[RMDB]
Overview
The data come from the RNA Mapping Database (RMDB), library OK2TRN. This 177-nucleotide RNA was probed chemically with DMS and 2A3. The 2A3 profile rests on 1,762 reads.
RNA sequence: GGGAACGACUCGAGUAGAGUCGAAAACGACAGCACUAGGUGCACAUGCCAUGCAUGAGACAGUACAGCUAUAUCAUGAGUACGUACCAUGUCAUGAGAUCUACUAGCAUGUCUAGCGUGAUCGAUGACCUCAUUACGCGUUCGCGCGUAAUGAGGUAAAAGAAACAACAACAACAAC
Reactivity to DMS in 0.01 (KOAc 150mM, MgCl2 10mM, bicine 150mM(pH8.5), 24C), signal-to-noise 2, nucleotides 027 to 126: c040g030a080c100a130g020c030a080c020u010a050g020g030u000g050c140a190c110a080u000g000c050c110a090u000g000c020a050u010g020a120g010a030c020a040g000u000a050c080a140g010c090u020a020u020a060u040c110a050u020g000a090g000u000a050c070g000u000a110c000c030a080u000g000u010c000a030u000g000a090g000a010u000c090u020a070c060u000a040g020c010a090u000g000u010c000u000a010g000c040g010u000g020a030u000c010g010a130u010g000
Reactivity to 2A3 in 0.01 (KOAc 150mM, MgCl2 10mM, bicine 150mM(pH8.5), 24C), signal-to-noise 2, nucleotides 027 to 126: c050g100a010c050a020g000c000a000c040u080a070g000g070u080g050c060a030c010a060u100g030c050c000a020u060g000c010a060u070g040a100g030a160c050a020g000u020a010c000a040g040c050u060a050u060a040u300c120a100u160g050a010g070u020a020c030g010u010a050c040c010a030u060g110u100c010a040u020g010a020g000a130u000c000u060a140c040u060a040g040c050a120u090g050u000c020u000a000g000c050g110u020g020a050u000c040g030a030u050g020